Structure probing data (DMS) for a 177-nucleotide construct. For DMS the reverse transcriptase was MarathonRT. The RNA was probed in 150 mM KOAc, 10 mM MgCl2 and 150 mM bicine (pH 8.5) at 24 C. It was measured as part of the RMDB library TTRINS.
[RMDB]
RNA sequence: GGGAACGACUCGAGUAGAGUCGAAAAGAUAUGGACGCCUAGGGUUAAGAGGGGAACAGCGAGCGUGUGUCGGAAACGACACUACGCGAUGAGCUGUUCCCCUCUUAACCCUAUGCGUCCUAAGUCACAAAAUGUAUUAGUUCGCUAAUACAUUUUGAAAAGAAACAACAACAACAAC
Reactivity to DMS in 0.01 (KOAc 150mM, MgCl2 10mM, bicine 150mM(pH8.5), 24C), signal-to-noise 1, nucleotides 027 to 126: g010a060u010a300u000g010g010a040c000g010c010c060u010a010g000g000g020u010u000a010a020g000a050g020g000g020g030a030a020c000a010g020c000g000a210g020c010g040u010g010u000g010u000c000g000g000a130a070a220c030g010a010c010a010c010u010a000c000g020c000g010a120u010g010a250g010c000u000g000u010u010c000c000c000c000u000c000u000u000a000a010c000c000c000u000a000u010g000c000g000u000c000c000u000a010a060g000u010c050a300